Structure probing data (DMS and 2A3) for a 177-nucleotide construct.

[RMDB]
RNA sequence: GGGAACGACUCGAGUAGAGUCGAAAAGCGGUAGCGCCAGGCAUCAAAGAAACCCAUGGCAGAAUUAACUACUCUAGCAAGACCUUACGCAAAAGCUGCAUUUGAAGUUGCGCUUCAGGGCGAUGCCCGUGGGACGUGUAUUCGUACACGUCCCACGAAAAGAAACAACAACAACAAC
Reactivity to DMS in 0.01 (KOAc 150mM, MgCl2 10mM, bicine 150mM(pH8.5), 24C), signal-to-noise 2, nucleotides 027 to 126: g060c070g010g010u010a050g010c060g010c010c030a100g010g040c010a030u000c040a040a070a160g020a120a110a100c040c010c010a120u000g000g010c020a070g010a070a060u000u000a090a130c090u000a050c030u000c020u010a090g000c050a070a120g000a060c020c010u000u010a080c090g010c090a080a030a050a040g010c020u010g040c020a090u010u000u000g020a070a090g020u000u010g030c130g000c020u010u000c090a070g010g000g010c050g000a120u010g010c010c030
Reactivity to 2A3 in 0.01 (KOAc 150mM, MgCl2 10mM, bicine 150mM(pH8.5), 24C), signal-to-noise 1, nucleotides 027 to 126: g000c050g060g020u050a040g000c000g000c010c000a020g000g000c010a020u060c050a020a180a090g070a070a150a010c050c000c010a040u010g040g000c010a000g080a090a160u180u040a090a070c000u040a030c010u040c000u020a020g020c010a010a000g000a070c010c020u080u080a060c070g000c020a000a140a000a050g020c050u060g010c020a070u100u070u130g060a050a050g080u100u050g060c050g020c000u080u080c040a080g000g040g000c020g030a030u000g040c000c000